[RMDB]
RNA sequence: GGGAACGACUCGAGUAGAGUCGAAAAUGGACUUUUUACAGUUCCUACUUAUCCGGUUUUAACGCUUUUUUAUUGGCGCAAAGGUUUACGGAUAAACAACUAAUAAUUAAACCUUUUGUGUGCGAAAAUUGGACGUUUAGGUUCGCCUAAACGUCAAUCUGCGUUAUUGAUUCGUCAAUAACGCAGAAAAAGAAACAACAACAACAAC
Reactivity to DMS in 0.01 (KOAc 150mM, MgCl2 10mM, bicine 150mM(pH8.5), 24C), signal-to-noise 1, nucleotides 027 to 156: u030g020g000a090c050u000u000u000u000u000a120c140a160g010u000u020c010c040u000a110c110u000u000a010u000c010c030g030g000u000u010u000u000a240a040c010g020c020u010u020u000u010u030u010a170u010u010g010g020c040g050c030a010a030a030g040g000u010u020u000a180c000g000g020a030u000a000a040a140c020a100a190c060u000a080a130u000a110a160u000u030a010a030a060c000c000u000u000u000u010g010u010g020u000g010c020g000a040a030a130a190u000u010g000g010a010c000g040u010u000u000a000g010g010u000u000c300g000c000c000u000a010a010a010c000g010u000c010a000a010
Reactivity to 2A3 in 0.01 (KOAc 150mM, MgCl2 10mM, bicine 150mM(pH8.5), 24C), signal-to-noise 2, nucleotides 027 to 156: u100g020g030a040c040u120u070u090u140u200a070c130a130g010u030u070c000c000u010a060c040u050u020a000u000c000c020g010g010u010u000u000u030a080a040c040g050c040u160u060u100u000u090u210a170u210u280g040g000c020g000c030a040a020a000g000g000u000u000u010a000c000g000g000a000u030a020a080a020c040a030a010c040u130a050a140u110a200a010u110u080a020a000a010c010c000u000u080u090u170g030u010g000u000g010c100g090a040a040a090a140u110u130g090g000a000c000g000u000u010u020a020g000g000u050u040c220g070c020c000u000a000a000a000c000g000u000c000a000a000
Structure probing data (DMS and 2A3) for a 207-nucleotide construct. Conditions: 150 mM KOAc, 10 mM MgCl2 and 150 mM bicine (pH 8.5), 24 C. The data come from the RNA Mapping Database (RMDB), library M2RFPK.